[RMDB]
RNA sequence: GGGAACGACUCGAGUAGAGUCGAAAAGGAUUGUGGGAUUGUUGCUUAACACUGAUGAGCAUAUUAUUGGUUCAAUUCUGGUGUUGAGAUAGUUGACACUUCUUAUACCGUAUGAAAACAUGUGUGGUUCUAACUUCCGAUUCGUCGGAAGUUAGAAAAAAGAAACAACAACAACAAC
Reactivity to DMS in 0.01 (KOAc 150mM, MgCl2 10mM, bicine 150mM(pH8.5), 24C), signal-to-noise 3, nucleotides 027 to 126: g010g010a050u010u010g020u000g010g010g020a100u020u000g010u010u000g000c010u000u000a030a020c020a010c030u000g000a100u020g000a020g030c010a040u020a100u030u040a110u010u010g010g020u000u000c000a030a140u020u000c030u010g020g020u020g010u000u000g000a010g000a110u030a040g010u010u000g010a090c090a040c050u010u010c000u000u010a120u010a170c030c020g010u010a060u000g010a100a020a060a130c130a030u010g020u000g020u010g010g010
Reactivity to 2A3 in 0.01 (KOAc 150mM, MgCl2 10mM, bicine 150mM(pH8.5), 24C), signal-to-noise 3, nucleotides 027 to 126: g120g000a070u120u170g010u040g050g110g000a010u020u040g100u120u140g020c010u020u010a000a000c020a000c020u000g020a060u010g000a030g020c020a020u030a070u300u110a110u120u300g000g010u010u010c020a060a090u120u030c080u170g010g000u000g050u010u000g000a000g000a010u130a010g030u000u050g070a050c010a000c000u020u020c010u010u100a110u040a050c020c000g040u030a060u240g140a040a140a040a030c150a120u090g040u000g030u060g110g070
This 177-nucleotide RNA was probed chemically with DMS and 2A3. Values cover nucleotides 27 to 126. The RNA was probed in 150 mM KOAc, 10 mM MgCl2 and 150 mM bicine (pH 8.5) at 24 C. It was measured as part of the RMDB libraries RFM100 and RFMREP.